[RMDB]
RNA sequence: GGGAACGACUCGAGUAGAGUCGAAAACAUGCAGAAGGGAUGAGAUUGAAGGAAGCAGGUAACAUAAAUCGAUCAUUGAGCUGCCUGGGCCAAGUGAUUACAGCACUUGUCGACGUGGGUAAUGGAACGCUUUACAAGGCUUCGGCCUUGUAAAGCGAAAAGAAACAACAACAACAAC
Reactivity to DMS in 0.01 (KOAc 150mM, MgCl2 10mM, bicine 150mM(pH8.5), 24C), signal-to-noise 1, nucleotides 027 to 126: c090a060u000g050c010a040g020a090a060g030g010g010a130u010g000a100g010a150u010u000g000a110a120g020g000a100a090g010c020a000g010g030u000a050a040c080a060u000a050a050a040u010c150g000a050u010c060a090u000u000g000a050g000c050u000g020c020c060u020g000g000g000c070c010a010a010g010u000g010a090u010u000a140c200a080g020c000a040c050u010u000g050u010c050g010a100c130g000u000g010g010g060u000a030a030u000g010g000a090a040
An RNA of 177 nucleotides, treated with DMS and read out base by base.
The RNA was probed in 150 mM KOAc, 10 mM MgCl2 and 150 mM bicine (pH 8.5) at 24 C.
For DMS, 826 sequencing reads were counted.
Values cover nucleotides 27 to 126.